[RMDB]
RNA sequence: GGGAACGACUCGAGUAGAGUCGAAAAGAUAUGGAUUUAGAGCUCGCUACAGCAAUGUCGGAAACGAUGACUGUAGAACUACGAGCCUAAAUCCUAAGUCAAAGCUCCGCGGUUCGCCGCGGAGCAAGAUACGACAAUGGUUCGCCAUUGUCGUAUCAAAAGAAACAACAACAACAAC
Reactivity to DMS in 0.01 (KOAc 150mM, MgCl2 10mM, bicine 150mM(pH8.5), 24C), signal-to-noise 1, nucleotides 027 to 126: g000a030u030a100u000g000g010a010u000u010u000a010g010a200g030c010u000c000g000c000u000a010c000a000g050c020a170a050u000g030u010c010g020g020a050a010a050c010g030a020u010g030a100c010u000g010u000a020g030a160a130c300u000a290c010g010a000g020c000c000u000a010a000a010u000c000c010u000a000a030g010u000c000a060a100a100g010c010u000c000c000g030c030g000g010u000u000c250g030c000c000g070c000g000g000a000g000c010a000a010
Reactivity to 2A3 in 0.01 (KOAc 150mM, MgCl2 10mM, bicine 150mM(pH8.5), 24C), signal-to-noise 2, nucleotides 027 to 126: g010a000u040a020u100g000g000a000u030u000u000a040g020a040g030c000u000c070g160c000u000a010c000a000g030c020a100a150u300g000u030c010g030g000a040a020a000c020g000a010u120g260a240c000u010g030u000a000g010a050a010c120u300a080c080g000a000g000c000c000u000a000a010a000u010c000c000u020a010a000g020u020c020a280a000a000g020c010u000c000c000g040c070g140g000u070u170c300g060c170c020g030c030g000g000a010g010c000a010a000

This 177-nucleotide RNA was probed chemically with DMS and 2A3.
The reactions ran in a buffer of 150 mM KOAc, 10 mM MgCl2 and 150 mM bicine (pH 8.5), at 24 C.
2A3 adducts were read by reverse transcription with SuperScript II with manganese.
It was measured as part of the RMDB library TTRDEL.